[RMDB]
RNA sequence: GGGAACGACUCGAGUAGAGUCGAAAAUAGGUCGUGUUCGCACGACCUAAGAUAAAAUGCAUAAAAUGCCAGUAACCCGAAACACAAGGGAGUGGACCUGGCCUACGAUGUCGUUCGCGACAUCGAAUGUACCAUUACUGUUCGCAGUAAUGGUACAAAAAGAAACAACAACAACAAC
Reactivity to DMS in 0.01 (KOAc 150mM, MgCl2 10mM, bicine 150mM(pH8.5), 24C), signal-to-noise 7, nucleotides 027 to 126: u000a020g000g020u000c000g040u000g030u010u010c200g040c010a000c000g000a010c000c000u000a000a010g000a130u000a070a060a090a060u010g020c120a110u010a060a090a070a160u000g000c000c040a020g010u010a120a130c010c000c000g000a140a100a190c150a050c150a090a110g000g000g010a210g030u010g000g000a130c200c000u000g010g010c010c290u000a070c010g000a010u000g010u000c000g010u000u010c190g010c010g010a020c000a000u000c000g000a050a050
Reactivity to 2A3 in 0.01 (KOAc 150mM, MgCl2 10mM, bicine 150mM(pH8.5), 24C), signal-to-noise 7, nucleotides 027 to 126: u060a000g000g000u000c010g000u010g040u050u060c250g020c060a000c000g000a000c000c000u000a010a000g000a000u090a000a120a030a050u120g000c020a010u120a190a230a050a030u160g000c010c010a010g020u040a070a060c000c020c020g040a150a220a010c090a020c030a140a080g080g010g030a070g040u110g040g020a030c010c000u010g010g000c000c000u050a040c010g000a000u000g000u000c010g000u030u030c220g010c010g070a000c000a000u000c000g000a050a030
Background
The data come from the RNA Mapping Database (RMDB), library M2PK50. Chemical mapping of a 177-nucleotide RNA with DMS and 2A3. For DMS the reverse transcriptase was MarathonRT. The reactions ran in a buffer of 150 mM KOAc, 10 mM MgCl2 and 150 mM bicine (pH 8.5), at 24 C.